Structure probing data (DMS and 2A3) for a 170-nucleotide construct. The data come from the RNA Mapping Database (RMDB), library 15KLIB.
[RMDB]
RNA sequence: GGGAACGACUCGAGUAGAGUCGAAAAACACGGAGAGAAACAGACAAAUCACCUCCAGAGGACCCCUUCAGCGAACAGAAGAGUCUCUCACGCGGUAGGAGCAAGCCCAUAGCGAUAGGGGGAGAUGCGGGACGAACCUUCGGGUUCGUCAAAAGAAACAACAACAACAAC
Reactivity to DMS in 0.01 (KOAc 150mM, MgCl2 10mM, bicine 150mM(pH8.5), 24C), signal-to-noise 4, nucleotides 027 to 129: a110c140a140c080g040g020a000g020a090g020a080a090a080c000a100g010a110c070a010a010a010u050c020a080c030c020u050c070c080a070g030a050g020g040a000c210c010c030c030u000u000c060a040g050c060g010a020a040c090a100g010a050a030g040a220g030u010c030u010c060u000c010a050c090g040c160g000g000u020a060g040g050a080g020c120a130a070g010c060c020c050a130u050a000g000c070g020a070u040a000g020g030g000g020g000a050g030a070u000g000c120g000g000
Reactivity to 2A3 in 0.01 (KOAc 150mM, MgCl2 10mM, bicine 150mM(pH8.5), 24C), signal-to-noise 3, nucleotides 027 to 129: a010c060a020c020g000g000a070g000a000g020a010a120a010c050a000g220a040c030a060a050a060u120c010a050c000c000u020c010c010a010g020a040g010g020a030c010c030c000c000u070u050c050a040g010c010g020a010a010c030a030g020a060a000g000a020g070u000c020u010c000u000c020a090c030g070c040g020g030u040a010g050g000a060g040c030a020a010g010c000c000c000a030u060a020g000c000g030a010u080a070g000g010g010g000g000a000g020a010u070g000c050g030g020
As a SHAPE reagent, 2A3 marks flexible, mostly unpaired nucleotides at the ribose 2'-OH. The RNA was probed in 150 mM KOAc, 10 mM MgCl2 and 150 mM bicine (pH 8.5) at 24 C.